[RMDB]
RNA sequence: GGGAACGACUCGAGUAGAGUCGAAAACAGCAGAACCAGCCUGCAACGGAUGGCAAUAACUCAGCGGUAGUCAAGAUUGGCAGCGCUGUUCCUCAAGGCGCGGUUAUGCUCUCCAAACGUGAGAUGCGCCCCGGCGUGUCUGCCACCUCUGCUAUCCAUCGUAGCUGAAUUUCGAUUCAGCUACGAUAAAAGAAACAACAACAACAAC
Reactivity to DMS in 0.01 (KOAc 150mM, MgCl2 10mM, bicine 150mM(pH8.5), 24C), signal-to-noise 1, nucleotides 027 to 156: c100a120g020c030a100g020a000a140c020c020a050g010c000c010u010g060c140a080a100c030g020g000a050u000g000g000c010a090a070u000a100a100c100u000c080a100g000c060g050g000u010a080g020u000c080a090a080g000a130u010u010g030g040c040a140g000c030g070c010u000g010u000u010c040c020u010c100a130a100g000g030c010g000c040g040g000u000u010a020u000g010c000u000c020u000c030c050a110a120a110c110g000u010g000a060g020a090u000g010c010g030c000c000c070c110g020g010c040g040u010g010u000c000u020g000c030c010a060c050c000u010c050u010g010c030u000a020u000c010c060
Reactivity to 2A3 in 0.01 (KOAc 150mM, MgCl2 10mM, bicine 150mM(pH8.5), 24C), signal-to-noise 5, nucleotides 027 to 156: c050a020g080c010a010g020a080a060c020c010a020g030c010c000u080g010c050a080a040c100g050g000a040u060g040g000c030a050a130u130a110a040c070u070c140a040g000c040g140g020u050a050g050u090c060a140a090g010a170u070u070g020g000c000a020g010c000g000c020u080g050u170u130c010c020u140c060a020a040g010g000c020g000c050g020g040u160u130a140u180g040c010u000c010u000c040c000a180a220a160c130g060u140g020a020g000a020u100g030c000g010c010c000c000c010g030g000c000g000u020g020u020c010u020g020c010c000a020c010c010u050c010u010g000c010u010a010u000c010c010